Conditions: 150 mM KOAc, 10 mM MgCl2 and 150 mM bicine (pH 8.5), 24 C. This 177-nucleotide RNA was probed chemically with 2A3 and DMS. Values cover nucleotides 27 to 126.
RNA sequence: GGGAACGACUCGAGUAGAGUCGAAAAGUAAGAAAAGUUAAAAGUUGCUUAUGAGCAGACACAGUAGCAAUUAACAUGAAAGCUUUGUAACUUUGAGAGAUAAACAAUUUGCCUAUAAAAACUGUGGUAACUGCUAAUGAUUCGUCAUUAGCAGUUAAAAAGAAACAACAACAACAAC
Reactivity to 2A3 in 0.01 (KOAc 150mM, MgCl2 10mM, bicine 150mM(pH8.5), 24C), signal-to-noise 1, nucleotides 027 to 126: g050u020a160a000g140a150a160a000a000g010u080u250a040a130a050a110g030u080u040g010c020u040u040a150u220g000a010g000c010a000g070a060c000a000c000a020g040u000a000g070c000a040a110u130u030a120a000c010a020u070g110a200a090a000g030c010u000u070u080g070u080a030a000c000u010u030u010g130a110g000a000g020a070u030a100a220a000c000a010a050u090u120u160g080c010c010u060a070u270a290a180a010a060a020c020u030g000u010g100g060
Reactivity to DMS in 0.01 (KOAc 150mM, MgCl2 10mM, bicine 150mM(pH8.5), 24C), signal-to-noise 4, nucleotides 027 to 126: g010u040a060a120g000a110a060a060a070g010u000u010a060a030a030a070g020u000u000g010c130u000u000a030u010g000a300g020c030a060g010a130c010a020c020a010g000u000a130g010c010a070a100u010u020a040a050c030a110u000g000a080a130a100g010c020u000u000u000g010u000a040a040c020u000u000u000g010a100g010a120g010a090u010a040a070a060c100a040a120u010u010u000g020c010c040u020a100u000a070a060a070a060a030c040u000g010u010g000g030
For 2A3 the reverse transcriptase was SuperScript II with manganese.